[RMDB]
RNA sequence: GGGAACGACUCGAGUAGAGUCGAAAAGAUAUGGAGCACCUUGUCGAACCGCCGUUCGGAAACGAACGGGCGGUGACGAAGCAACAUGGUGCUCCUAAGUCAAAACCAAGUCUGUUCGCAGACUUGGGUGAACAACAAUCUUCGGAUUGUUGUUCACAAAAGAAACAACAACAACAAC
Reactivity to 2A3 in 0.01 (KOAc 150mM, MgCl2 10mM, bicine 150mM(pH8.5), 24C), signal-to-noise 3, nucleotides 027 to 126: g010a010u010a010u040g010g010a000g000c020a000c020c000u020u040g070u140c180g170a100a000c010c010g000c000c000g000u000u000c010g020g020a010a000a010c020g000a010a010c070g050g110g010c010g000g000u000g000a010c050g090a080a020g130c040a000a020c000a010u030g000g030u000g000c000u000c000c000u000a000a010g000u000c010a010a030a040a100c010c000a000a010g010u010c020u020g110u130u220c300g000c220a000g000a010c000u000u000g020g010
Reactivity to DMS in 0.01 (KOAc 150mM, MgCl2 10mM, bicine 150mM(pH8.5), 24C), signal-to-noise 6, nucleotides 027 to 126: g000a030u000a070u010g000g000a020g020c000a000c010c000u000u000g020u010c060g030a160a020c000c000g030c000c000g000u000u000c000g020g010a020a020a050c000g020a020a010c020g020g030g030c000g000g010u020g010a080c260g020a150a180g010c090a300a020c000a020u000g010g000u000g010c000u000c000c000u000a000a060g000u000c010a120a050a130a300c000c000a000a000g010u000c000u010g000u000u010c290g030c010a010g010a000c000u000u000g000g010